RNA sequence: GGGAACGACUCGAGUAGAGUCGAAAAGAUAUGGACCCGCAUUGCAUCAGCGUUGAUCUCGGAAACGAGGGAGCUGAUGACCCAAUGGAAGGGUCCUAAGUCAAACAGCUGGGUUCGCCCAGCUGAAUCACGAUUUUUAGUUCGCUAAAAAUCGUGAAAAAGAAACAACAACAACAAC
Reactivity to 2A3 in 0.01 (KOAc 150mM, MgCl2 10mM, bicine 150mM(pH8.5), 24C), signal-to-noise 2, nucleotides 027 to 126: g020a010u060a050u160g000g000a010c000c030c010g070c070a010u000u010g000c000a000u000c000a000g050c010g300u300u040g000a010u000c010u020c000g020g050a090a080a070c000g010a010g010g020g000a010g000c000u000g000a000u010g000a010c000c000c010a000a000u040g010g170a300a210g100g020g000u000c000c000u030a010a000g020u010c050a100a080a140c000a030g020c000u000g010g130g000u110u110c200g100c070c010c010a000g030c000u000g000a000a030
Reactivity to DMS in 0.01 (KOAc 150mM, MgCl2 10mM, bicine 150mM(pH8.5), 24C), signal-to-noise 2, nucleotides 027 to 126: g020a050u000a300u010g000g000a010c000c000c010g010c000a030u000u020g000c010a000u000c000a000g000c000g000u010u020g020a010u010c000u000c000g000g000a100a080a160c000g000a020g000g010g000a030g020c000u000g010a010u010g010a100c200c280c040a000a020u000g020g000a090a130g030g010g000u000c000c000u000a030a070g010u000c030a160a160a270c010a020g010c020u000g000g010g020u000u010c230g020c020c000c000a010g000c000u000g000a030a090
Chemical mapping of a 177-nucleotide RNA with 2A3 and DMS. Values are in units of 0.01, from 0 to 300, in steps of 10. For DMS the reverse transcriptase was MarathonRT.